[RMDB]
RNA sequence: GGGAACGACUCGAGUAGAGUCGAAAAAGACAACCGAACUGUAAAUUGUAAUCCUAAUAACUAUAACUGGAGAUGCUACAAUAACAGCCUUCAGUGACCUUGAAAACCCACAGUAGUUAGUAAAAUAUCCUGUGUUUUCCUGACUUUAGCAUGGUUAGCUAAAAUUAAAUUUCGAUUUAAUUUUAGCAAAAGAAACAACAACAACAAC
Reactivity to 2A3 in 0.01 (KOAc 150mM, MgCl2 10mM, bicine 150mM(pH8.5), 24C), signal-to-noise 2, nucleotides 027 to 156: a000g080a030c030a010a010c050c000g050a070a040c060u030g030u110a050a130a150u140u060g060u060a060a060u020c000c000u050a150a130u140a220a140c050u180a170u060a300a010c010u020g010g000a030g010a070u180g020c080u050a050c040a190a100u160a210a060c050a050g020c010c010u010u000c000a010g000u020g030a050c000c000u030u040g040a110a050a050a100c010c020c010a050c050a010g040u090a000g010u120u010a020g050u140a020a100a050a070u100a010u060c020c030u040g000u000g030u030u000u040u000c010c000u020g080a080c000u130u100u070a050g010c010a050u040g030g030u060u040a040
Reactivity to DMS in 0.01 (KOAc 150mM, MgCl2 10mM, bicine 150mM(pH8.5), 24C), signal-to-noise 1, nucleotides 027 to 156: a080g020a180c040a100a200c010c000g020a030a170c060u010g030u020a040a060a150u000u010g020u010a130a190u000c000c010u030a130a070u000a140a100c010u030a120u020a120a080c040u010g030g010a040g010a060u020g000c010u000a060c060a130a090u010a130a130c020a030g000c050c000u000u000c020a020g010u000g000a090c060c030u010u000g010a080a080a020a070c000c000c040a090c060a120g020u000a050g020u000u020a020g000u000a040a050a050a090u000a130u000c070c120u010g000u010g000u010u000u010u010c030c030u000g020a040c040u000u000u000a050g030c040a090u010g020g000u000u000a120
This 207-nucleotide RNA was probed chemically with 2A3 and DMS. The 2A3 profile rests on 940 reads. High 2A3 reactivity points to a flexible backbone, as in loops and unpaired stretches.